[RMDB]
RNA sequence: GGGAACGACUCGAGUAGAGUCGAAAAGGUUUGGAGGCUCAGUGUUUCUUCACAUUAGUCAAAAUUUAUAAAUUUCAAGGGGCCGGCCAGGAAUUUAGUUGCAAGAAACAGGACACACAUCCCUCAACAAUCCAAGAGAAUUCGUUCUCUUGGAUUGAAAAGAAACAACAACAACAAC
Reactivity to DMS in 0.01 (KOAc 150mM, MgCl2 10mM, bicine 150mM(pH8.5), 24C), signal-to-noise 1, nucleotides 027 to 126: g010g010u000u000u010g010g000a140g010g000c070u000c060a100g000u000g030u020u000u000c030u000u020c020a080c030a150u010u010a120g040u000c040a100a030a040a040u000u010u020a150u010a060a080a140u010u000u000c010a040a160g000g000g030g020c150c140g040g030c030c050a050g000g000a090a030u000u000u010a060g030u010u030g000c110a070a040g010a060a050a070c040a010g020g000a060c110a020c090a040c080a130u000c010c000c010u020c110a090a150
Conditions: 150 mM KOAc, 10 mM MgCl2 and 150 mM bicine (pH 8.5), 24 C. Structure probing data (DMS) for a 177-nucleotide construct. It was measured as part of the RMDB library OK2TRN.